Chemical mapping of a 207-nucleotide RNA with DMS and 2A3.
[RMDB]
RNA sequence: GGGAACGACUCGAGUAGAGUCGAAAACCUAUCCAAAAUGAGAUCCCAUCUUGCACACUGUGCUAAUUUGAGAUUCUCAUGCCUCCUACUUGGAGAGAUCUGGACUAGAUGUCAGGGCAUCUGACUCAAUACAUUCGUCAGUUCGCUGACGAAUGAAUCUUUUAUUAGGCUUCGGCCUAAUAAAAGAAAAAGAAACAACAACAACAAC
Reactivity to DMS in 0.01 (KOAc 150mM, MgCl2 10mM, bicine 150mM(pH8.5), 24C), signal-to-noise 2, nucleotides 027 to 156: c010c000u000a090u000c020c030a050a040a080a170u000g010a010g000a050u000c000c000c000a040u000c110u000u000g020c000a010c000a190c180u020g030u000g040c010u000a010a050u000u010u010g010a020g010a050u010u010c000u000c000a000u000g020c060c010u000c010c010u010a130c200u010u020g050g020a040g010a170g010a090u010c030u000g010g020a140c090u000a100g030a110u010g010u010c030a050g030g000g020c110a080u010c040u030g010a070c020u010c050a060a080u000a110c020a030u000u000c000g000u000c010a030g020u010u010c300g030c030u000g000a000c000g010a010a000u000g010a070a110
Reactivity to 2A3 in 0.01 (KOAc 150mM, MgCl2 10mM, bicine 150mM(pH8.5), 24C), signal-to-noise 7, nucleotides 027 to 156: c010c000u010a040u060c000c020a060a040a000a100u010g000a010g000a000u010c000c010c000a010u010c010u010u010g000c010a010c030a070c180u300g010u020g010c060u150a050a060u020u000u020g020a030g010a020u290u090c000u000c000a010u030g020c000c000u020c000c000u150a300c130u170u240g000g000a010g010a020g020a080u050c090u110g020g010a010c040u050a070g020a120u100g020u010c010a010g020g040g150c090a120u110c090u000g010a010c000u000c060a050a080u110a120c010a000u000u000c000g000u000c000a000g010u020u120c170g010c110u000g000a000c000g000a000a000u000g000a000a000
For DMS the reverse transcriptase was MarathonRT. Reactivities are given for positions 27 through 156.